[RMDB]
This 207-nucleotide RNA was probed chemically with 2A3. The 2A3 profile rests on 716 reads.
RNA sequence: GGGAACGACUCGAGUAGAGUCGAAAAGAAGGGUGAAAGCCCUUGAUACUGUAGAGGAAAUUAUAAAUAAGAAGAGUUCUGAGUUGCUUAAGCAGAACUAAAAUAAAAAGACAAGCAUUAUUACAAACAUGGCGAGGUAAGUUCGCUUACCUCGCAAGGAUCCAAUAUGGUUCGCCAUAUUGGAUCCAAAAGAAACAACAACAACAAC
Reactivity to 2A3 in 0.01 (KOAc 150mM, MgCl2 10mM, bicine 150mM(pH8.5), 24C), signal-to-noise 1, nucleotides 027 to 156: g050a000a000g000g000g000u000g040a050a030a010g010c000c000c000u000u000g030a030u030a070c030u070g050u090a020g000a000g110g020a020a060a090u140u150a120u200a140a060a060u210a110a060g060a130a030g020a000g050u000u050c030u020g020a010g070u120u040g020c000u170u020a050a000g000c000a000g010a010a010c080u050a010a000a000a000u050a000a140a020a000a000g080a010c070a030a000g000c010a020u000u030a080u020u080a220c090a060a040a030c020a050u090g050g000c000g000a000g000g010u000a000a000g000u010u010c060g000c090u000u000a000c000c000u000c000g000c000a000a000
The RNA was probed in 150 mM KOAc, 10 mM MgCl2 and 150 mM bicine (pH 8.5) at 24 C.